[RMDB]
RNA sequence: GGGAACGACUCGAGUAGAGUCGAAAACAUUACGAAUUCAGUCGCAAAUUGUAGAAUUAGCUACUCUACGAUUAAGUGAGCGUUAGUAACGUUGUAAUAUAAUAUAGUCUUUGGAAGGAUUAUAUUGGAGCCGCGGACAAGUUCGCUUGUCCGCGAACCGACGUUUUAUGUUCGCAUAAAACGUCGGAAAAGAAACAACAACAACAAC
Reactivity to 2A3 in 0.01 (KOAc 150mM, MgCl2 10mM, bicine 150mM(pH8.5), 24C), signal-to-noise 1, nucleotides 027 to 156: c020a090u090u210a050c070g040a090a090u220u150c040a030g080u030c000g000c030a030a010a000u010u010g010u010a000g010a050a050u060u050a040g010c030u060a040c000u000c000u000a000c010g040a010u030u060a190a080g010u000g100a040g060c020g000u110u180a050g010u080a050a040c040g000u000u000g020u040a100a100u060a040u010a070a010u010a010u000a060g000u000c020u080u040u140g250g110a120a090g040g000a000u000u000a000u000a020u030u010g000g080a070g120c070c000g000c000g000g000a000c000a000a020g010u010u110c170g010c150u000u000g000u000c000c000g060c000g010a000a020